Chemical mapping of a 177-nucleotide RNA with 2A3 and DMS. For DMS the reverse transcriptase was MarathonRT.
RNA sequence: GGGAACGACUCGAGUAGAGUCGAAAACUGAAUGCAUGAAGAGGUACAUUGGCACACCUUAUGAGGGAAUUGUAGACACCUUAGUUUCUCUGAUUAAUGUGUUAACAAGGUUUACUUGGUUCCAGGAGACGAUAGUUUCGUUCGCGAAACUAUCGUCAAAAGAAACAACAACAACAAC
Reactivity to 2A3 in 0.01 (KOAc 150mM, MgCl2 10mM, bicine 150mM(pH8.5), 24C), signal-to-noise 1, nucleotides 027 to 126: c000u000g100a150a000u110g000c010a020u110g070a050a020g030a050g130g020u000a040c020a080u080u120g020g030c020a000c000a010c000c000u080u050a080u190g090a070g000g020g040a050a010u000u070g050u020a020g050a020c010a050c050c000u030u010a000g060u050u030u010c050u020c000u030g100a160u060u170a120a060u110g060u010g040u060u100a080a000c010a000a020g050g000u120u040u000a060c040u030u040g000g000u000u000c000c020a050g090g040a070
Reactivity to DMS in 0.01 (KOAc 150mM, MgCl2 10mM, bicine 150mM(pH8.5), 24C), signal-to-noise 2, nucleotides 027 to 126: c040u010g000a050a030u000g020c110a080u040g000a110a070g020a040g010g030u000a130c050a120u020u010g020g010c040a120c080a080c070c020u000u000a070u010g000a100g000g000g000a090a100u020u000g010u000a180g030a240c080a020c060c050u010u000a050g010u010u010u000c080u010c120u010g000a060u000u000a050a060u000g030u000g000u010u010a050a070c010a030a060g020g010u010u000u000a090c030u000u000g010g010u000u000c020c020a100g000g020a240